RNA sequence: GGGAACGACUCGAGUAGAGUCGAAAAGAUAUGGAUCAUAUGUAGGACAUGCGAUUAUCGUCGGAAACGACGAGAAUCGCAACAGCCUACCGCUAUGAUCCUAAGUCAAACACCGCUUCGGCGGUGAGUCUGCCAUUAUGUUCGCAUAAUGGCAGACAAAAGAAACAACAACAACAAC
Reactivity to DMS in 0.01 (KOAc 150mM, MgCl2 10mM, bicine 150mM(pH8.5), 24C), signal-to-noise 1, nucleotides 027 to 126: g000a020u000a300u000g000g020a030u000c010a000u010a010u000g000u000a030g000g000a020c130a270u000g000c010g000a010u000u000a050u000c000g050u010c020g000g000a150a110a220c010g000a010c000g000a000g000a000a000u000c000g000c010a040a000c250a180g000c010c000u000a000c000c000g030c000u000a000u000g010a000u000c000c000u010a010a090g000u000c030a180a060a240c010a000c000c020g000c000u000u000c170g030g000c010g000g010u000g000a000
Reactivity to 2A3 in 0.01 (KOAc 150mM, MgCl2 10mM, bicine 150mM(pH8.5), 24C), signal-to-noise 2, nucleotides 027 to 126: g030a010u100a040u190g000g020a000u020c010a000u010a010u190g010u010a010g010g050a060c060a190u090g010c000g020a000u010u040a050u100c040g010u010c010g020g020a110a080a060c010g000a000c010g000a020g010a010a010u000c010g020c000a020a000c020a000g050c000c000u000a000c000c000g000c000u000a000u000g000a010u020c000c000u000a030a000g010u000c020a040a110a060c000a010c010c000g000c040u080u120c300g240g000c010g020g000u010g000a040